[RMDB]
RNA sequence: GGGAACGACUCGAGUAGAGUCGAAAAACGAUGGCCGUAUAUCGGCCCAAAAGGUACGUCCGAGACUAGGACGUUAAUAGGCCCGGAGUGUAAGCGUAGUAAUACGUGGAGCUGAAAAUAAAACAAACCUAUCUCAUACUUUCGAGUAUGAGAUAGGAAAAGAAACAACAACAACAAC
Reactivity to 2A3 in 0.01 (KOAc 150mM, MgCl2 10mM, bicine 150mM(pH8.5), 24C), signal-to-noise 4, nucleotides 027 to 126: a000c070g070a120u110g010g000c020c020g050u060a120u040a040u300c010g010g000c000c000c000a040a090a010a020g080g020u080a000c000g000u000c000c010g040a050g060a050c120u080a060g000g000a010c000g000u000u030a050a020u060a040g140g000c040c000c000g070g090a030g010u040g030u130a040a010g000c000g010u010a000g010u020a050a110u010a030c000g010u030g000g020a010g000c020u040g030a060a080a050a050u230a040a080a020a000c060a030a050a020
Reactivity to DMS in 0.01 (KOAc 150mM, MgCl2 10mM, bicine 150mM(pH8.5), 24C), signal-to-noise 5, nucleotides 027 to 126: a140c110g020a140u000g020g020c000c010g020u000a150u000a090u010c010g040g020c010c010c160a020a040a070a060g020g010u000a020c000g010u000c000c000g010a200g010a130c230u010a110g010g010a010c000g000u000u000a050a060u000a090g000g020c030c010c020g020g010a040g020u000g000u000a300a150g000c010g000u000a000g000u020a100a130u000a010c010g000u000g000g010a300g010c020u000g000a030a040a040a050u010a050a070a070a080c170a080a050a140
Chemical mapping of a 177-nucleotide RNA with 2A3 and DMS. Conditions: 150 mM KOAc, 10 mM MgCl2 and 150 mM bicine (pH 8.5), 24 C. For DMS the reverse transcriptase was MarathonRT.